RNA sequence: GGGAACGACUCGAGUAGAGUCGAAAAACGGUCGUACGCGACCGCGGCGCGGCUAGGUCGACGGACCGAACAAUGGCAUCCCGCAUUCUGCCAUCCGCCGCGCAGCUUCUUCUCAAACGGUGCGGAAAAAAGUAGGACACCUUCGGGUGUCCUACAAUCCAUAUAAACCGUUCGCGGUUUAUAUGGAAAAAGAAACAACAACAACAAC
Reactivity to 2A3 in 0.01 (KOAc 150mM, MgCl2 10mM, bicine 150mM(pH8.5), 24C), signal-to-noise 2, nucleotides 027 to 156: a000c020g000g000u000c000g020u030a020c210g010c020g120a000c000c010g000c000g010g000c000g000c000g010g000c000u010a010g000g000u000c020g050a220c210g140g030a000c000c010g010a000a010c010a010a020u000g000g000c000a010u030c010c020c010g000c000a020u300u080c010u020g010c000c000a000u020c010c020g020c000c000g000c010g010c000a010g010c000u150u090c020u050u000c010u010c030a090a120a070c050g000g000u010g000c010g000g000a010a030a000a090a000a020g000u010a000g000g000a000c000a000c020c020u050u070c210g060g010g000u000g000u000c000c000u000a000c000a000a000
Reactivity to DMS in 0.01 (KOAc 150mM, MgCl2 10mM, bicine 150mM(pH8.5), 24C), signal-to-noise 1, nucleotides 027 to 156: a080c020g030g010u000c030g020u000a070c150g080c010g030a000c000c040g060c000g000g010c030g050c010g000g000c010u000a070g020g010u000c000g040a180c300g020g020a060c040c010g050a190a020c240a190a040u020g000g000c010a090u010c000c000c000g000c030a070u000u000c060u000g000c000c000a100u000c050c090g070c000c010g000c020g000c000a010g000c010u000u000c030u010u000c020u000c070a200a110a100c090g030g040u000g000c000g000g010a010a040a060a110a070a140g000u000a010g030g010a040c000a030c000c000u000u020c300g030g040g050u000g000u000c000c000u000a000c010a030a010
Structure probing data (2A3 and DMS) for a 207-nucleotide construct.
Conditions: 150 mM KOAc, 10 mM MgCl2 and 150 mM bicine (pH 8.5), 24 C.
DMS adducts were read by reverse transcription with MarathonRT.
The data come from the RNA Mapping Database (RMDB), library M2RFPK.
The DMS profile rests on 2,381 reads.